[RMDB]
RNA sequence: GGGAACGACUCGAGUAGAGUCGAAAAGAUAUGGAUGUUCGAAGCUUGGCACAUGUGUCGGAAACGACGAAUGCCAAGAACUACUUCGUAACAUCCUAAGUCAAAGAUAAUGCUUCGGCAUUAUCAACCGAUUAGUCAAGUUCGCUUGACUAAUCGGAAAAGAAACAACAACAACAAC
Reactivity to 2A3 in 0.01 (KOAc 150mM, MgCl2 10mM, bicine 150mM(pH8.5), 24C), signal-to-noise 3, nucleotides 027 to 126: g010a000u070a030u150g000g000a010u020g000u000u030c010g000a010a020g060c020u020u010g000g050c020a060c010a210u300g220u120g000u210c000g040g030a080a070a020c010g010a000c000g030a060a040u030g000c000c020a000a010g010a000a010c030u150a030c010u000u010c000g070u150a000a010c000a000u000c000c000u000a100a010g030u030c050a160a060a010g020a000u020a000a000u000g050c040u050u090c300g140g000c010a000u000u000a000u020c000a010a070
Reactivity to DMS in 0.01 (KOAc 150mM, MgCl2 10mM, bicine 150mM(pH8.5), 24C), signal-to-noise 2, nucleotides 027 to 126: g000a050u000a290u000g000g000a000u000g020u000u000c000g000a020a010g000c030u000u000g010g010c000a040c190a070u020g010u000g010u010c000g000g000a150a070a230c020g040a010c010g000a160a110u000g020c000c000a040a000g060a040a030c100u000a300c000u000u000c000g000u000a010a020c010a000u000c000c000u000a020a040g000u020c030a070a140a190g010a010u000a000a030u000g030c010u020u020c240g000g010c010a010u000u000a000u000c000a080a230

Conditions: 150 mM KOAc, 10 mM MgCl2 and 150 mM bicine (pH 8.5), 24 C. The record gives the reactivity of an RNA of 177 nucleotides to 2A3 and DMS. For DMS, 1,861 sequencing reads were counted. The data come from the RNA Mapping Database (RMDB), library TTRDEL. The 2A3 profile rests on 4,305 reads.